[RMDB]
RNA sequence: GGGAACGACUCGAGUAGAGUCGAAAAUAAAUAAUACUUUUCCGAUAAAUAUUGCAAAUCAUAUCCAACUUGAUAGUCUUCGUAAAUCUGCAUAUUUCUAAUUGACAACUCCUCACGAGUAGGUGUACCAUUUAGCUAUAUUCGUAUAGCUAAAUGGAAAAGAAACAACAACAACAAC
Reactivity to 2A3 in 0.01 (KOAc 150mM, MgCl2 10mM, bicine 150mM(pH8.5), 24C), signal-to-noise 9, nucleotides 027 to 126: u100a010a060a020u200a040a060u180a160c060u060u060u020u000c010c010g060a060u110a140a100a020u130a090u110u210g020c020a020a070a070u060c030a040u040a040u110c070c030a050a090c120u050u100g020a020u080a080g060u020c040u110u070c130g080u100a070a050a110u050c040u030g010c020a020u010a050u080u050u030c070u110a110a150u060u120g040a040c020a050a060c060u010c010c000u030c020a070c100g060a060g080u110a030g020g060u060g010u020a060
Reactivity to DMS in 0.01 (KOAc 150mM, MgCl2 10mM, bicine 150mM(pH8.5), 24C), signal-to-noise 5, nucleotides 027 to 126: u030a070a100a100u030a080a050u040a070c110u000u010u000u000c010c010g000a110u050a050a030a070u020a030u000u050g020c080a060a040a040u010c060a060u010a050u010c040c100a110a140c080u010u020g020a060u000a030g020u010c040u000u020c050g010u010a030a040a060u020c070u040g000c020a040u010a080u020u000u010c070u040a040a080u030u010g010a090c180a050a090c030u000c010c020u000c030a110c100g010a060g020u020a040g010g020u000g000u020a120
Overview: This 177-nucleotide RNA was probed chemically with 2A3 and DMS. DMS adducts were read by reverse transcription with MarathonRT. For DMS, 9,170 sequencing reads were counted. The RNA was probed in 150 mM KOAc, 10 mM MgCl2 and 150 mM bicine (pH 8.5) at 24 C.